[RMDB]
RNA sequence: GGGAACGACUCGAGUAGAGUCGAAAAGCAAAGCACAUGAAGCACAUGAAGCACAUGUAGCACAUGAAGCACAUGAAGCACAUGAAGCACAUGAAGCACAUGAAGCACAUGAAGCACAUGAAAAAAACAAAUUCGUUUUGUUCGCAAAACGAAUUUGAAAAGAAACAACAACAACAAC
Reactivity to DMS in 0.01 (KOAc 150mM, MgCl2 10mM, bicine 150mM(pH8.5), 24C), signal-to-noise 1, nucleotides 027 to 126: g030c030a080a080a090g050c040a220c000a050u000g000a140a110g020c030a250c000a010u000g040a000a240g010c030a270c000a010u010g000u030a030g050c050a060c000a000u000g000a200a040g040c000a140c080a040u000g010a110a120g020c000a170c050a000u000g000a000a040g080c000a070c000a000u010g010a110a030g020c000a140c000a030u000g000a030a300g000c060a150c010a040u010g030a020a050g000c000a190c040a050u040g000a080a000a010a110a000a050a110
Reactivity to 2A3 in 0.01 (KOAc 150mM, MgCl2 10mM, bicine 150mM(pH8.5), 24C), signal-to-noise 2, nucleotides 027 to 126: g110c070a060a000a090g080c030a010c010a060u060g100a120a020g000c000a000c000a040u000g060a160a010g000c020a020c010a020u000g020u030a070g000c010a010c010a030u030g050a090a020g000c020a020c000a130u060g120a110a050g050c030a030c000a090u030g100a090a020g040c010a000c000a040u020g060a100a000g000c000a010c000a030u010g040a120a030g000c010a020c010a030u060g040a080a030g000c010a010c010a060u080g070a030a070a050a010a000a000a010